Record summary: Chemical mapping of a 177-nucleotide RNA with 2A3 and DMS.

RNA sequence: GGGAACGACUCGAGUAGAGUCGAAAACAAACGUUAAACGACAGUUUGUAUCUAUGAUGGCUAAAGAACUUUGUAUUGCAGCAAAAAGCCACGUAGACAAAAUGCUAAGUGGCUGAGCAGUGAAAAUAAUGUGAUCUAAGUUCGCUUAGAUCACAUUAAAAGAAACAACAACAACAAC
Reactivity to 2A3 in 0.01 (KOAc 150mM, MgCl2 10mM, bicine 150mM(pH8.5), 24C), signal-to-noise 6, nucleotides 027 to 126: c010a010a020a000c020g030u090u130a160a140a030c110g070a030c050a060g010u000u030u010g040u020a070u010c030u020a090u100g130a080u050g100g030c050u110a110a080a080g070a110a100c040u080u070u040g070u060a080u060u200g030c050a050g000c010a040a010a090a020a000g000c000c000a010c000g020u010a000g010a020c030a020a170a040a050u180g000c020u030a090a010g000u000g000g000c020u010g020a010g000c040a030g030u040g110a060a060a020a050u070
Reactivity to DMS in 0.01 (KOAc 150mM, MgCl2 10mM, bicine 150mM(pH8.5), 24C), signal-to-noise 7, nucleotides 027 to 126: c020a030a050a060c080g010u010u010a050a090a170c230g010a050c060a070g010u000u000u020g010u000a110u010c040u010a050u010g010a060u010g000g000c040u010a040a080a100g010a100a070c090u010u000u000g020u000a070u010u020g010c080a110g000c030a040a080a060a140a030g000c000c000a000c010g020u000a010g000a060c080a080a070a090a120u050g010c020u000a020a040g020u000g000g010c010u000g000a100g010c030a060g020u010g010a050a060a050a090u010

For DMS the reverse transcriptase was MarathonRT.
For 2A3 the reverse transcriptase was SuperScript II with manganese.